[RMDB]
RNA sequence: GGGAACGACUCGAGUAGAGUCGAAAACAAAUCGUCGGCGAGCCGAAUGUAACGGAGAUUGACGAGGUCGAAGCAGAACACGCGGCCGCCAUCCACCAGGACAAUGGGAAUUCUGGUCACGGGCCACCUCACAUAGCAUGGAGACGAGGACACCUCGGUAUGGAGGAGUUUUCGAACUCCUCCAUACAAAAGAAACAACAACAACAAC
Reactivity to 2A3 in 0.01 (KOAc 150mM, MgCl2 10mM, bicine 150mM(pH8.5), 24C), signal-to-noise 2, nucleotides 027 to 156: c030a000a100a030u070c080g050u020c060g000g000c010g000a060g000c000c000g040a090a080u120g030u050a080a000c000g040g000a060g010a060u000u090g050a090c120g000a040g020g020u040c030g030a040a000g040c080a020g040a170a060c030a000c110g020c000g010g000c020c020g030c000c000a030u080c000c000a020c000c000a010g020g020a040c020a160a070u140g020g000g110a060a000u120u030c010u060g020g000u000c040a050c150g000g010g000c010c000a010c020c060u050c010a040c000a070u110a060g080c020a040u100g020g040a020g060a020c030g000a010g060g020a090c030a040c060c030u040c090g060

Chemical mapping of a 207-nucleotide RNA with 2A3. It was measured as part of the RMDB library OK3TST. 2A3 adducts were read by reverse transcription with SuperScript II with manganese. Conditions: 150 mM KOAc, 10 mM MgCl2 and 150 mM bicine (pH 8.5), 24 C. For 2A3, 1,005 sequencing reads were counted.